[RMDB]
RNA sequence: GGGAACGACUCGAGUAGAGUCGAAAACUCAAAGUGUUAGGGAGGCAUUCAACAAUCUAGACAGUACCACUUCACUAACUGAGGAAAAUUUUGGGAAACCUGACAUUUCGGCAAAGGAUUUGAGAAAUCGAUGGUAGUAGUUCGCUACUACCAUCGAAAAAGAAACAACAACAACAAC
Reactivity to 2A3 in 0.01 (KOAc 150mM, MgCl2 10mM, bicine 150mM(pH8.5), 24C), signal-to-noise 5, nucleotides 027 to 126: c010u010c010a060a050a060g080u050g000u030u030a010g010g020g010a030g020g040c130a080u100u090c040a130a120c030a080a170u070c050u060a030g090a210c020a040g010u050a040c010c010a030c060u040u030c060a060c130u150a260a080c080u090g040a030g060g090a010a120a040a070u120u100u090u080g050g010g000a070a020a010c000c010u010g000a010c020a010u050u120u110c090g030g020c020a060a050a070g080g050a120u040u070u110g130a100g060a010a060a030
Reactivity to DMS in 0.01 (KOAc 150mM, MgCl2 10mM, bicine 150mM(pH8.5), 24C), signal-to-noise 3, nucleotides 027 to 126: c040u000c020a080a070a070g000u020g010u010u000a040g000g000g000a090g010g000c070a090u040u060c050a110a060c100a110a110u000c010u020a110g000a040c110a030g030u040a070c090c080a080c120u000u020c020a090c040u000a040a070c140u000g000a050g000g030a060a050a100a100u000u020u040u000g020g010g020a090a080a090c020c030u000g010a050c180a050u000u000u030c090g000g050c070a080a050a050g000g000a070u000u000u000g010a080g000a030a090a120

Chemical mapping of a 177-nucleotide RNA with 2A3 and DMS. For DMS the reverse transcriptase was MarathonRT. The reactions ran in a buffer of 150 mM KOAc, 10 mM MgCl2 and 150 mM bicine (pH 8.5), at 24 C. 2A3 is a SHAPE reagent: it acylates the 2'-hydroxyl of flexible nucleotides of all four kinds.